Source: RMDB library OK3TST, as collected in RNAgym.
The record gives the reactivity of an RNA of 207 nucleotides to 2A3 and DMS.
2A3 is a SHAPE reagent: it acylates the 2'-hydroxyl of flexible nucleotides of all four kinds.
For 2A3, 2,184 sequencing reads were counted.
The reactions ran in a buffer of 150 mM KOAc, 10 mM MgCl2 and 150 mM bicine (pH 8.5), at 24 C.
2A3 adducts were read by reverse transcription with SuperScript II with manganese.
RNA sequence: GGGAACGACUCGAGUAGAGUCGAAAAAGGUAUGAGGUGUAUCUUUGCCCUCCAUCAAGUAGCAAAGAUGGACAUGUAAACAAAUUUCGACACUGUGAUGACUGCCACAAAAAGCAGCAUUAUGAGGUUGAAUGUAAAAGGAUAACCUUAGCGGCGAACUAUGACGAGGUUUCGACCUCGUCAUAGUAAAAGAAACAACAACAACAAC
Reactivity to 2A3 in 0.01 (KOAc 150mM, MgCl2 10mM, bicine 150mM(pH8.5), 24C), signal-to-noise 5, nucleotides 027 to 156: a000g130g000u150a110u160g080a050g090g050u150g000u060a000u050c030u010u010u040g010c010c010c010u000c010c010a070u040c040a050a150g080u160a020g110c060a090a110a040g010a010u010g000g000a050c090a120u210g040u200a100a070a040c070a050a160a100u050u020u020c010g000a000c030a010c190u020g020u020g040a010u020g210a210c000u010g000c020c050a120c160a090a130a040a040a020g000c000a000g010c000a000u020u000a010u020g140a020g000g050u020u020g010a020a010u060g030u100a030a130a080a010g020g030a050u050a090a030c000c000u010u030a050g040c110g080g000c050g020a040
Reactivity to DMS in 0.01 (KOAc 150mM, MgCl2 10mM, bicine 150mM(pH8.5), 24C), signal-to-noise 2, nucleotides 027 to 156: a030g020g030u010a030u000g030a080g040g020u000g010u010a060u000c000u010u000u020g020c030c110c050u010c060c090a090u010c080a040a130g040u000a070g030c050a080a080a180g000a070u000g010g000a030c050a070u000g020u000a070a100a110c070a080a090a130u000u000u000c030g010a030c030a030c000u000g060u010g010a040u000g020a140c000u000g020c000c000a050c070a100a160a120a190a060g010c010a000g020c030a070u000u000a000u000g000a060g000g040u000u000g000a030a030u000g030u000a050a100a090a100g010g000a100u000a040a030c020c020u000u000a100g030c120g000g050c050g000a060